[RMDB]
RNA sequence: GGGAACGACUCGAGUAGAGUCGAAAAGAUAUGGAGCAUCCAUACCAGCAUCGAUCUACGCUCGGAAACGAGCGUAGGGAGCUGAAUGGUAUGCUCCUAAGUCAAAAGUGUGGGUUCGCCCACACAACAUUAUCCUGGUCUUCGGACCAGGAUAAUGAAAAGAAACAACAACAACAAC
Reactivity to 2A3 in 0.01 (KOAc 150mM, MgCl2 10mM, bicine 150mM(pH8.5), 24C), signal-to-noise 4, nucleotides 027 to 126: g030a010u060a050u160g000g000a000g040c000a000u020c000c010a010u070a300c300c030a010g010c000a110u300c070g010a030u000c010u010a000c000g020c010u020c000g010g010a050a080a060c010g000a010g000c010g000u000a000g010g000g000a010g000c010u010g050a030a010u020g020g040u280a030u040g000c010u000c000c000u000a020a010g020u020c040a010a000a070a230g000u010g000u000g000g050g060u060u150c300g150c020c000c000a000c000a000c000a000a010
Reactivity to DMS in 0.01 (KOAc 150mM, MgCl2 10mM, bicine 150mM(pH8.5), 24C), signal-to-noise 4, nucleotides 027 to 126: g010a040u000a300u020g010g010a010g020c020a020u000c020c010a020u000a110c210c020a010g000c010a300u000c180g010a040u010c000u000a000c010g030c000u000c000g000g010a070a070a090c000g010a010g000c000g010u000a000g000g020g000a020g020c000u010g000a080a010u000g000g000u010a010u000g010c010u000c000c000u000a020a090g010u000c030a120a110a090a150g000u010g010u000g010g000g020u000u010c300g010c000c000c000a010c000a000c010a070a150

Chemical mapping of a 177-nucleotide RNA with 2A3 and DMS. DMS (dimethyl sulfate) methylates the pairing face of unpaired adenines and cytosines. The data come from the RNA Mapping Database (RMDB), library TTRDES. Reactivities are given for positions 27 through 126.